An RNA of 177 nucleotides, treated with DMS and 2A3 and read out base by base.
Conditions: 150 mM KOAc, 10 mM MgCl2 and 150 mM bicine (pH 8.5), 24 C.
For DMS the reverse transcriptase was MarathonRT.
Source: RMDB library OK2TRN, as collected in RNAgym.

RNA sequence: GGGAACGACUCGAGUAGAGUCGAAAAUACUGCUGGCACAGAGCAUUAAUCAGAUCGAUGGUGGUAUCCAGCAUAUCUGACGUCUGCGAAUUAUCAUCAGCGAUGAUUUCAGCAUACUGCGGUGCCACCGUGGCGUAAUCUUCGGAUUACGCCACGGAAAAGAAACAACAACAACAAC
Reactivity to DMS in 0.01 (KOAc 150mM, MgCl2 10mM, bicine 150mM(pH8.5), 24C), signal-to-noise 2, nucleotides 027 to 126: u000a100c120u000g040c110u000g000g030c040a050c050a080g000a140g000c070a030u010u000a020a040u010c100a050g020a140u000c130g030a110u000g010g030u000g030g020u000a050u020c000c010a170g000c020a070u010a060u000c050u000g000a030c140g010u000c010u020g000c080g000a100a160u040u000a080u020c150a090u000c150a100g010c030g030a010u000g000a050u000u000u020c040a050g000c190a050u000a100c150u000g020c020g000g000u000g000c000c000a020
Reactivity to 2A3 in 0.01 (KOAc 150mM, MgCl2 10mM, bicine 150mM(pH8.5), 24C), signal-to-noise 1, nucleotides 027 to 126: u120a000c040u020g060c000u020g020g020c020a020c010a110g090a010g100c040a010u050u180a060a010u050c030a000g060a150u080c110g090a060u020g030g000u030g000g020u020a000u080c000c010a030g070c000a000u040a030u080c040u060g050a060c040g110u040c000u010g020c000g040a120a060u230u080a060u120c050a000u010c010a010g040c060g100a140u020g010a060u000u080u070c120a060g070c030a030u060a090c020u050g040c090g050g000u000g010c010c000a000